[RMDB]
This 177-nucleotide RNA was probed chemically with DMS and 2A3.
The 2A3 profile rests on 1,454 reads.
The data come from the RNA Mapping Database (RMDB), library OK1LIB.
RNA sequence: GGGAACGACUCGAGUAGAGUCGAAAAGCACGGGUUCCUCCGGACGUGCGAACACUUGAGCGGUCUUUCCAGAGCUCUUGUGGAUUAGGACGUUCUACGACUAGAAGUCUACGUAGUUCGUCCGAAAGGCUUGCUUGUGGUUCGCCACGAGCAAGCCAAAAGAAACAACAACAACAAC
Reactivity to DMS in 0.01 (KOAc 150mM, MgCl2 10mM, bicine 150mM(pH8.5), 24C), signal-to-noise 1, nucleotides 027 to 126: g010c000a020c060g010g010g000u070u000c030c040u000c160c040g000g010a110c030g000u000g010c000g030a120a030c020a000c010u000u000g040a000g120c020g000g000u000c010u010u020u000c040c040a100g000a150g010c020u000c080u050u000g030u000g020g000a110u030u000a100g000g000a010c000g000u000u000c000u020a000c000g000a200c120u010a080g000a170a110g040u040c020u020a220c030g000u000a010g000u000u070c000g000u000c000c040g000a000a050a030
Reactivity to 2A3 in 0.01 (KOAc 150mM, MgCl2 10mM, bicine 150mM(pH8.5), 24C), signal-to-noise 1, nucleotides 027 to 126: g030c020a010c030g000g000g050u140u080c010c040u020c010c160g120g070a020c010g000u020g030c010g020a070a020c030a000c010u020u000g000a000g000c020g010g100u040c000u000u110u040c030c020a020g020a040g010c020u010c010u020u040g000u000g040g000a000u010u080a050g000g000a000c000g010u000u000c000u030a040c000g070a070c090u030a050g050a170a060g200u070c000u030a040c010g000u010a000g000u000u000c020g010u010c000c000g000a000a000a000